[RMDB]
Annotation: Structure probing data (2A3 and DMS) for a 177-nucleotide construct. Conditions: 150 mM KOAc, 10 mM MgCl2 and 150 mM bicine (pH 8.5), 24 C. For DMS, 2,485 sequencing reads were counted. Reactivities are given for positions 27 through 126. DMS adducts were read by reverse transcription with MarathonRT. The 2A3 profile rests on 2,502 reads.
RNA sequence: GGGAACGACUCGAGUAGAGUCGAAAAGCUAGAGAGAGGGGGAAAAACAGUCCCCAACUUCCAAAAGGAAGCAUUUGACAGAUACGCAGAAAUUCCUGAGGACGCUGUCUGUCACAAUACUUUCCAGAAGUUCUGGUAAGUUCGCUUACCAGAACUUAAAAGAAACAACAACAACAAC
Reactivity to 2A3 in 0.01 (KOAc 150mM, MgCl2 10mM, bicine 150mM(pH8.5), 24C), signal-to-noise 4, nucleotides 027 to 126: g060c050u110a010g010a000g020a000g050a140g110g080g000g030g060a060a090a100a040a050c090a060g210u040c000c000c000c030a010a010c000u020u010c020c010a070a160a000a070g010g000a000a000g010c040a030u020u010u030g000a000c010a000g010a010u020a030c150g000c020a040g100a150a230a160u200u110c030c080u170g080a140g110g000a030c090g010c010u010g000u020c000u010g000u000c010a010c010a000a000u050a010c020u050u070u070c020c000a060g020
Reactivity to DMS in 0.01 (KOAc 150mM, MgCl2 10mM, bicine 150mM(pH8.5), 24C), signal-to-noise 2, nucleotides 027 to 126: g000c080u030a030g000a050g020a110g000a150g040g000g010g000g000a000a090a070a130a080c300a130g000u010c000c000c000c050a030a020c020u000u000c040c070a130a040a130a060g000g000a020a010g000c020a020u000u020u000g020a000c000a010g000a030u000a000c100g030c000a080g000a090a100a120u020u000c060c060u010g030a090g000g010a270c120g000c020u010g000u000c000u010g020u000c000a000c300a000a000u000a050c020u000u000u020c000c010a130g000